[RMDB]
RNA sequence: GGGAACGACUCGAGUAGAGUCGAAAAAGUAGGCGAGAAGCUGUCGCAUACUCUUCGGAGUAUGGUCUUCGGACGAUCUCUAACAGCACCAUGAGAUCCGACAGCGGUGCUGUAGAAGCCUACGAAAGGGAGACACGGCCUUCGGGUUGUGUCUCCCAAAAGAAACAACAACAACAAC
Reactivity to 2A3 in 0.01 (KOAc 150mM, MgCl2 10mM, bicine 150mM(pH8.5), 24C), signal-to-noise 4, nucleotides 027 to 126: a000g020u010a000g020g010c020g020a080g030a200a000g000c000u000g000u000c000g000c000a000u000a000c000u000c010u030u070c230g180g000a000g000u010a000u000g000g000u000c010u030u070c200g100g000a030c000g020a050u000c000u040c030u090a160a070c030a040g050c020a020c020c000a170u260g000a010g010a030u010c010c000g010a010c000a000g000c000g000g010u030g010c040u000g000u020a030g030a120a000g000c000c000u010a010c010g010a070a020a010
Reactivity to DMS in 0.01 (KOAc 150mM, MgCl2 10mM, bicine 150mM(pH8.5), 24C), signal-to-noise 3, nucleotides 027 to 126: a140g000u000a010g000g000c020g000a060g020a110a100g010c010u000g010u000c000g010c010a010u000a000c000u000c000u000u070c150g010g000a010g030u010a000u010g000g020u000c000u010u040c150g010g020a000c000g000a020u000c000u000c010u030a120a090c040a090g000c030a150c150c140a140u040g000a020g000a040u000c010c010g010a020c000a010g010c020g000g030u030g020c030u010g010u000a080g000a140a150g000c000c000u000a000c020g000a040a090a090